[RMDB]
About this RNA
This 207-nucleotide RNA was probed chemically with DMS and 2A3. The DMS profile rests on 2,892 reads.
RNA sequence: GGGAACGACUCGAGUAGAGUCGAAAAUUGAUAAGCUUGAUUAAAGUUGACUAAAUCUUUACUGGCCAAAUAACGCGUGUGUGCCUGAUAAAACGGAUAACUAAGAUAAAGCUUUUGUAGUGAUUGAUUAAUAUCGUUGAUAACUUGCUGGCCUAAAAGAUUUAGUAAGCUUCGGCUUACUAAAUCUAAAAGAAACAACAACAACAAC
Reactivity to DMS in 0.01 (KOAc 150mM, MgCl2 10mM, bicine 150mM(pH8.5), 24C), signal-to-noise 2, nucleotides 027 to 156: u000u000g010a170u000a050a060g030c010u000u020g020a120u000u010a020a160a080g040u010u020g040a140c070u000a070a080a070u000c050u010u000u000a090c090u000g000g020c000c040a030a060a130u010a070a070c120g020c070g010u020g030u010g030u000g020c020c010u000g030a090u000a040a050a080a110c100g030g000a080u000a050a070c050u020a050a210g020a140u000a020a070a240g010c030u000u000u000u000g020u000a050g030u000g000a180u000u010g020a130u010u000a040a110u000a090u000c030g010u000u000g020a090u000a060a090c060u000u010g030c000u000g000g000c000c000u000a020a110a200
Reactivity to 2A3 in 0.01 (KOAc 150mM, MgCl2 10mM, bicine 150mM(pH8.5), 24C), signal-to-noise 3, nucleotides 027 to 156: u050u080g010a000u040a060a040g020c020u060u090g060a090u050u170a100a070a020g030u040u030g030a010c070u080a040a020a080u020c030u010u060u070a050c060u060g020g000c010c010a040a090a180u150a120a060c120g030c060g050u060g010u010g050u100g040c040c000u050g040a110u110a080a070a020a020c060g030g000a030u040a130a020c050u030a030a050g020a050u050a040a100a010g000c000u070u120u090u130g090u090a020g050u020g080a070u090u000g020a020u010u100a070a040u050a060u160c000g020u000u030g010a080u020a160a050c010u000u060g020c020u040g090g000c010c000u030a050a070a010
Annotation: The reactions ran in a buffer of 150 mM KOAc, 10 mM MgCl2 and 150 mM bicine (pH 8.5), at 24 C.